Overview:
The record gives the reactivity of an RNA of 207 nucleotides to 2A3 and DMS. The RNA was probed in 150 mM KOAc, 10 mM MgCl2 and 150 mM bicine (pH 8.5) at 24 C. The DMS profile rests on 2,112 reads. The 2A3 profile rests on 1,685 reads. For DMS the reverse transcriptase was MarathonRT.

RNA sequence: GGGAACGACUCGAGUAGAGUCGAAAAGUAAGUCGCAUCGCAAAACCGCGGCAAGUGGAGUUAGCGAGAGGAGGCUGGGUUUUGGCUUCCUUAAGCAAUCGGUCACCGAGAAGGUGUGGUCGUUACCUAGACAGUUUUCUGUUCGCAGAAAACUGAAUCUCGUAGAGUGAUUCGUCACUCUACGAGAAAAAGAAACAACAACAACAAC
Reactivity to 2A3 in 0.01 (KOAc 150mM, MgCl2 10mM, bicine 150mM(pH8.5), 24C), signal-to-noise 3, nucleotides 027 to 156: g070u040a100a000g030u030c000g000c000a070u040c040g030c130a140a090a050a020c040c030g000c020g000g020c060a030a040g020u090g040g070a100g030u120u100a030g040c050g000a040g000a020g040g000a010g020g020c020u080g030g110g190u040u150u290u300g020g000c000u020u010c000c000u000u010a020a010g000c000a000a010u080c030g020g020u060c000a000c020c040g040a040g070a180a090g040g010u080g030u070g030g020u010c010g030u040u040a120c000c000u020a050g020a070c010a010g000u000u000u000u000c000u000g020u040u070c200g000c040a000g000a000a000a010a000c000u000g000a000a050
Reactivity to DMS in 0.01 (KOAc 150mM, MgCl2 10mM, bicine 150mM(pH8.5), 24C), signal-to-noise 2, nucleotides 027 to 156: g010u000a050a060g010u000c020g030c020a080u000c010g170c100a090a060a080a150c080c040g010c030g080g000c040a060a160g070u000g000g010a130g000u020u030a170g030c020g030a270g020a030g020g010a030g010g000c000u030g010g040g020u050u010u000u020g040g000c010u000u010c010c010u010u000a010a300g030c030a060a040u040c030g010g000u010c070a150c010c000g010a130g020a180a100g000g010u020g010u010g030g010u000c020g010u000u000a080c010c020u000a250g020a190c000a030g010u000u000u000u000c010u000g000u020u010c300g010c010a040g000a010a020a010a010c000u000g010a050a070